Chemical mapping of a 177-nucleotide RNA with DMS and 2A3.
Conditions: 150 mM KOAc, 10 mM MgCl2 and 150 mM bicine (pH 8.5), 24 C.
For 2A3, 4,502 sequencing reads were counted.
For 2A3 the reverse transcriptase was SuperScript II with manganese.
It was measured as part of the RMDB library OK2TRN.

[RMDB]
RNA sequence: GGGAACGACUCGAGUAGAGUCGAAAAACGUAAAAAUCUGGAAAAGCAGUAUCGCUACCAAUUGCAGUCACUGCAGUAUUUACCGAUUUACAACCGUACAUCGUAUUUACGUGAUGACUUAGCGGCACGAUUUACCUAUGUUCGCAUAGGUAAAUCGAAAAGAAACAACAACAACAAC
Reactivity to DMS in 0.01 (KOAc 150mM, MgCl2 10mM, bicine 150mM(pH8.5), 24C), signal-to-noise 5, nucleotides 027 to 126: a100c080g010u010a030a080a060a090a080u000c080u000g000g000a080a080a130a110g010c030a060g020u000a080u020c070g010c010u000a130c070c070a080a100u010u010g020c070a030g000u000c020a010c020u000g020c000a070g020u000a010u000u000u000a020c110c070g010a010u000u000u000a020c030a110a110c280c280g010u000a030c070a030u000c010g010u000a030u000u000u000a020c020g000u000g010a060u010g010a040c020u000u000a080g000c010g010g010c250a110
Reactivity to 2A3 in 0.01 (KOAc 150mM, MgCl2 10mM, bicine 150mM(pH8.5), 24C), signal-to-noise 3, nucleotides 027 to 126: a010c020g000u060a030a060a040a050a170u090c100u070g040g020a130a130a150a060g030c030a030g040u170a070u170c060g000c030u030a060c020c000a060a090u140u140g040c030a020g010u030c020a010c030u040g030c050a070g000u000a010u000u030u010a090c100c080g010a000u010u000u040a020c030a080a190c080c120g010u000a010c020a010u000c000g010u030a030u030u050u020a010c010g020u020g050a070u020g010a030c000u040u120a020g020c030g040g030c040a010